This 177-nucleotide RNA was probed chemically with 2A3 and DMS. Reactivities are given for positions 27 through 126. For 2A3, 3,623 sequencing reads were counted.
RNA sequence: GGGAACGACUCGAGUAGAGUCGAAAAGAUAUGGAACCAGUUCAUCUAUAAGGACGUUGAAAUCGGAAACGAUGGAGUCCUAUAGUGCCGCUGGUUCCUAAGUCAAAUCGGUCCUUCGGGACCGAAAUCAAUAUUAAGCCUUCGGGCUUAAUAUUGAAAAAGAAACAACAACAACAAC
Reactivity to 2A3 in 0.01 (KOAc 150mM, MgCl2 10mM, bicine 150mM(pH8.5), 24C), signal-to-noise 1, nucleotides 027 to 126: g030a000u050a020u140g000g010a000a000c000c000a010g000u080u080c050a080u010c020u020a010u040a220a300g000g000a000c020g120u290u070g000a030a050a000u030c020g000g030a060a080a040c000g000a000u000g000g000a020g000u020c050c000u010a000u000a000g000u000g050c040c030g000c000u000g000g010u000u000c000c000u000a010a000g020u000c010a020a010a170u040c010g000g020u000c010c000u040u050c160g060g010g000a010c000c000g000a000a000a000
Reactivity to DMS in 0.01 (KOAc 150mM, MgCl2 10mM, bicine 150mM(pH8.5), 24C), signal-to-noise 4, nucleotides 027 to 126: g010a070u000a300u010g010g010a000a010c000c000a010g000u000u010c070a120u000c010u010a010u010a080a080g010g010a010c000g000u000u010g000a090a170a020u000c000g000g000a160a110a160c020g010a000u000g000g000a120g010u000c000c010u000a010u000a000g000u000g010c300c300g000c010u000g000g010u000u010c000c000u000a020a040g000u000c040a060a120a120u000c010g000g000u000c000c000u000u010c220g030g010g010a000c000c000g000a010a020a050